Conditions: 150 mM KOAc, 10 mM MgCl2 and 150 mM bicine (pH 8.5), 24 C.
Chemical mapping of a 177-nucleotide RNA with DMS and 2A3.
[RMDB]
RNA sequence: GGGAACGACUCGAGUAGAGUCGAAAACAACAACAAGAAUUAACAUAUAUUGUACGUAGCUUAAUUAAUACAAUGUAUCCACAUCAACCAUGUUAUGAAGGGGCUAUGUGUGUGUGCGGCACAGGUGGCUUCCCAUUCAAUUCGUUGAAUGGGAAGCAAAAGAAACAACAACAACAAC
Reactivity to DMS in 0.01 (KOAc 150mM, MgCl2 10mM, bicine 150mM(pH8.5), 24C), signal-to-noise 2, nucleotides 027 to 126: c040a060a100c060a010a070c080a090a170g040a080a090u000u000a070a090c130a070u000a030u000a020u010u000g010u000a040c100g010u010a070g010c170u020u010a100a100u000u000a050a100u000a020c020a010a020u000g000u000a030u000c070c060a040c050a020u000c040a080a050c060c120a080u020g000u000u000a080u000g000a100a070g030g010g000g000c020u000a000u010g020u000g000u010g010u000g010u010g020c070g000g000c040a040c040a040g000g000u000g000
Reactivity to 2A3 in 0.01 (KOAc 150mM, MgCl2 10mM, bicine 150mM(pH8.5), 24C), signal-to-noise 3, nucleotides 027 to 126: c010a000a020c010a020a000c020a030a030g090a130a170u190u150a130a010c010a000u070a010u010a020u110u040g010u050a040c080g040u040a010g080c020u090u170a100a070u140u060a080a040u220a050c030a000a040u020g010u010a040u060c050c000a070c020a120u060c010a020a070c020c020a050u040g030u130u090a130u130g080a070a030g020g000g020g070c020u060a020u090g100u020g000u000g000u020g040u040g040c060g030g000c000a000c020a070g100g030u040g090

For DMS the reverse transcriptase was MarathonRT. 2A3 adducts were read by reverse transcription with SuperScript II with manganese. The DMS profile rests on 1,642 reads. High DMS reactivity at an A or C suggests that its Watson-Crick edge is free.